[RMDB]
RNA sequence: GGGAACGACUCGAGUAGAGUCGAAAAACAUCCUGGCCAACCCAACCCCACGAUCCUCCAUCGGCAUGAUCAUGAUGUGUUCUCAAAUAUCAGGCCAGUAAAUCACCAUGCUCGUGCUGGUAAAGGCAACUUAUGCCCAAGUUCGCUUGGGCAUAAAUCUAAUAAUAUGGUUCGCCAUAUUAUUAGAAAAAGAAACAACAACAACAAC
Reactivity to 2A3 in 0.01 (KOAc 150mM, MgCl2 10mM, bicine 150mM(pH8.5), 24C), signal-to-noise 3, nucleotides 027 to 156: a000c020a040u060c000c000u000g010g000c000c010a040a040c060c030c020a040a050c020c010c020c020a070c060g040a110u050c010c010u030c040c020a040u030c010g010g000c000a000u010g000a010u020c010a010u020g040a060u100g030u000g040u110u040c060u010c050a070a090a020u210a100u110c070a050g030g000c010c000a000g010u050a010a080a040u090c000a010c020c000a000u010g010c000u010c010g010u010g010c010u010g000g010u050a130a130a020g020g010c020a050a030c030u020u000a010u010g000c000c000c000a020a000g010u030u070c100g030c110u000u010g050g000g000c000a000u000a000a000a000
Reactivity to DMS in 0.01 (KOAc 150mM, MgCl2 10mM, bicine 150mM(pH8.5), 24C), signal-to-noise 4, nucleotides 027 to 156: a080c050a110u000c060c000u000g020g010c010c030a120a120c060c030c030a090a180c030c010c010c010a100c090g020a140u000c010c010u000c030c030a060u000c040g010g010c030a030u010g000a030u000c000a040u000g010a050u020g010u010g010u010u000c020u000c050a110a050a140u000a110u010c090a090g020g030c040c030a100g010u000a050a060a090u010c010a020c010c010a060u000g000c090u000c020g010u000g010c000u010g020g030u000a030a050a030g010g000c090a080a090c100u000u000a030u000g000c010c000c000a010a030g020u000u000c300g040c020u000u000g020g010g020c000a000u000a010a020a100